This 207-nucleotide RNA was probed chemically with DMS and 2A3.
The RNA was probed in 150 mM KOAc, 10 mM MgCl2 and 150 mM bicine (pH 8.5) at 24 C.
The DMS profile rests on 2,475 reads.
RNA sequence: GGGAACGACUCGAGUAGAGUCGAAAACUGACACGGUAAUCCCAACUCUGAUUCAUCCCGUCAUGGAAGAAGACACUUUCCGGCAAUCCCUCAACUGGACGAAGGAUAGGAACACGUUUGGCGAUUGUAUAACCAACCUUUCAUCAUUGGCUUGGCAGAAGGAAUUGAUGUUCGCAUCAAUUCCUUCAAAAGAAACAACAACAACAAC
Reactivity to DMS in 0.01 (KOAc 150mM, MgCl2 10mM, bicine 150mM(pH8.5), 24C), signal-to-noise 1, nucleotides 027 to 156: c080u000g000a080c070a070c070g010g000u000a060a120u000c040c040c000a100a130c090u000c070u030g040a200u000u000c040a150u010c000c000c120g050u000c040a110u000g040g020a050a090g010a110a080g000a180c060a050c050u000u000u000c000c000g020g050c010a090a130u000c020c000c070u000c070a090a110c070u030g030g010a080c090g010a210a140g000g010a090u010a080g020g010a100a090c080a090c060g000u000u000u000g020g030c030g000a130u000u010g000u000a150u000a140a040c000c020a010a050c030c020u000u000u000c070a070u000c050a060u000u010g000g010c120u040u000g000g040c090a110
Reactivity to 2A3 in 0.01 (KOAc 150mM, MgCl2 10mM, bicine 150mM(pH8.5), 24C), signal-to-noise 3, nucleotides 027 to 156: c040u070g060a070c040a020c110g020g020u050a040a030u020c020c000c000a000a100c060u070c060u070g050a160u120u020c030a060u070c070c000c000g080u050c040a040u130g010g010a020a040g020a020a010g090a030c020a010c100u080u100u060c000c000g010g000c030a040a090u020c040c010c000u080c050a030a170c050u100g030g030a040c040g010a050a010g030g000a010u060a090g030g030a030a010c030a010c060g030u030u100u090g040g000c030g070a060u070u100g050u110a130u070a070a020c010c010a000a050c030c030u020u110u110c060a100u040c000a050u050u110g040g000c020u020u100g110g000c040a040